An RNA of 177 nucleotides, treated with 2A3 and DMS and read out base by base.
RNA sequence: GGGAACGACUCGAGUAGAGUCGAAAAGAUAUGGAGACUGGUGACAUGAAUCAUGAUCGGAAACGAUCAGGAAUUCAACAGCACCUGUCUCCUAAGUCAAAGGUCGAAUGCUUCGGCAUUCGACCAACCAACUGCAUAUGUUCGCAUAUGCAGUUGGAAAAGAAACAACAACAACAAC
Reactivity to 2A3 in 0.01 (KOAc 150mM, MgCl2 10mM, bicine 150mM(pH8.5), 24C), signal-to-noise 4, nucleotides 027 to 126: g010a000u010a010u060g010g010a010g010a000c020u030g010g010u010g030a070c150a300u300g010a070a000u020c020a060u020g000a000u000c000g000g000a010a000a000c010g010a000u000c010a010g020g040a090a130u050u000c150a300a080c110a180g030c000a000c010c000u000g000u000c000u000c000c010u000a000a000g000u000c030a140a070a120g010g000u000c000g000a000a010u030g000c040u080u090c300g180g000c000a000u000u000c000g010a000c000c000a000a000
Reactivity to DMS in 0.01 (KOAc 150mM, MgCl2 10mM, bicine 150mM(pH8.5), 24C), signal-to-noise 2, nucleotides 027 to 126: g000a000u010a030u010g000g000a020g000a010c000u000g000g000u010g000a050c020a300u020g000a010a000u000c020a110u010g010a000u000c000g000g010a000a000a030c000g030a010u000c000a010g000g010a020a050u010u000c010a110a100c220a140g000c000a010c010c000u000g000u000c000u000c000c000u000a000a050g000u000c000a100a130a100g000g010u010c000g000a020a000u000g010c000u000u010c300g050g000c000a010u010u010c000g010a010c000c000a010a060

DMS adducts were read by reverse transcription with MarathonRT. High 2A3 reactivity points to a flexible backbone, as in loops and unpaired stretches. For 2A3 the reverse transcriptase was SuperScript II with manganese. The RNA was probed in 150 mM KOAc, 10 mM MgCl2 and 150 mM bicine (pH 8.5) at 24 C. The DMS profile rests on 3,348 reads.